[RMDB]
RNA sequence: GGGAACGACUCGAGUAGAGUCGAAAAAUAUGUCAGUGGUCCCUGUAAGAGGAUCUAGGACGUAGGGAGGGUGGGUCAGAGCGCGGAUGCCCUAGAUCACGCGCGCGAGAAGUUAUGGGAACCACUAGACUGUUCCAUCGUUCGCGGUGGGACGGUCAAAAGAAACAACAACAACAAC
Reactivity to DMS in 0.01 (KOAc 150mM, MgCl2 10mM, bicine 150mM(pH8.5), 24C), signal-to-noise 6, nucleotides 027 to 126: a090u030a040u020g000u010c080a050g040u010g000g010u000c020c000c000u010g000u020a060a060g010a140g000g000a090u010c010u010a080g010g000a100c020g000u000a010g010g010g010a020g010g000g010u010g000g010g000u010c020a010g000a010g000c010g010c050g000g000a100u010g000c070c020c040u010a090g000a030u000c020a080c060g010c020g000c030g020c070g000a100g030a080a140g010u010u020a030u010g000g000g000a170a050c040c020a010c040u000a090
Reactivity to 2A3 in 0.01 (KOAc 150mM, MgCl2 10mM, bicine 150mM(pH8.5), 24C), signal-to-noise 8, nucleotides 027 to 126: a000u240a050u130g210u110c050a000g020u010g010g000u000c000c000c000u000g080u050a080a070g100a100g120g020a040u020c010u020a020g040g020a010c030g000u010a010g010g020g030a130g040g040g090u180g010g010g000u010c030a020g010a010g060c050g000c040g020g010a030u080g020c000c020c000u070a070g010a020u030c010a020c070g030c000g000c010g010c070g030a060g050a110a060g110u160u170a060u180g010g000g040a060a080c020c000a000c010u020a040

Structure probing data (DMS and 2A3) for a 177-nucleotide construct. 2A3 adducts were read by reverse transcription with SuperScript II with manganese. The 2A3 profile rests on 13,930 reads. The reactions ran in a buffer of 150 mM KOAc, 10 mM MgCl2 and 150 mM bicine (pH 8.5), at 24 C. Source: RMDB library OK1LIB, as collected in RNAgym.